[RMDB]
RNA sequence: GGGAACGACUCGAGUAGAGUCGAAAAGGAAAGCGCCGACGUCACCGUGCGAGUCGGCACCGAGGGCGACGACGCCAUCCUCGAGGUCGCCGAUGACGGUCCGGGCAUGAGUCAGGAGGAUGCGCUGUAACGCUCCUUGGUUCGCCAAGGAGCGUUAAAAAGAAACAACAACAACAAC
Reactivity to DMS in 0.01 (KOAc 150mM, MgCl2 10mM, bicine 150mM(pH8.5), 24C), signal-to-noise 2, nucleotides 027 to 126: g010g000a090a060a010g010c050g040c000c040g030a110c030g010u000c050a070c020c030g000u020g010c090g000a140g000u010c030g030g010c040a040c040c010g000a090g000g020g020c020g000a080c070g000a120c180g010c060c060a100u020c010c000u000c020g010a170g000g000u000c050g030c010c000g010a030u000g010a080c000g020g030u000c050c030g000g020g000c060a130u020g020a080g010u000c020a080g000g000a130g020g000a100u000g000c070g020c030u000g020
Reactivity to 2A3 in 0.01 (KOAc 150mM, MgCl2 10mM, bicine 150mM(pH8.5), 24C), signal-to-noise 1, nucleotides 027 to 126: g050g000a170a070a000g030c060g000c010c010g040a000c030g090u060c030a020c100c030g030u050g050c070g050a050g100u030c030g000g010c000a000c010c010g050a050g010g070g000c080g030a140c150g010a000c090g080c020c000a030u000c010c000u000c010g050a080g010g080u090c070g000c000c000g030a090u110g040a050c020g000g000u000c020c010g050g020g020c040a040u160g050a040g070u030c070a010g000g110a010g000g010a080u100g030c100g000c020u020g100